[RMDB]
RNA sequence: GGGAACGACUCGAGUAGAGUCGAAAAGGAAUUGAAUGGCUAUAAGUUAACUCUUGUCAAGGGUUAGACGCAUCCUUAUCAAAUCCGAUUGAAUUGAAGAUGAAGGAAGAGUUCGUUUACAUUGUGGUCCGCCUCUCCUAUUCGUAGGAGAGGCGGAAAAAGAAACAACAACAACAAC
Reactivity to 2A3 in 0.01 (KOAc 150mM, MgCl2 10mM, bicine 150mM(pH8.5), 24C), signal-to-noise 1, nucleotides 027 to 126: g000g040a000a010u000u060g010a000a030u010g040g000c130u090a120u030a300a050g000u000u000a000a000c010u010c010u230u300g300u180c240a090a000g210g000g000u000u040a160g000a040c000g000c030a000u000c000c000u050u120a300u090c000a000a000a000u000c000c000g040a070u000u040g070a060a030u140u240g000a000a040g040a010u030g010a000a130g060g120a070a040g000a060g120u000u010c000g000u000u090u000a060c030a030u010u010g030u000g090g100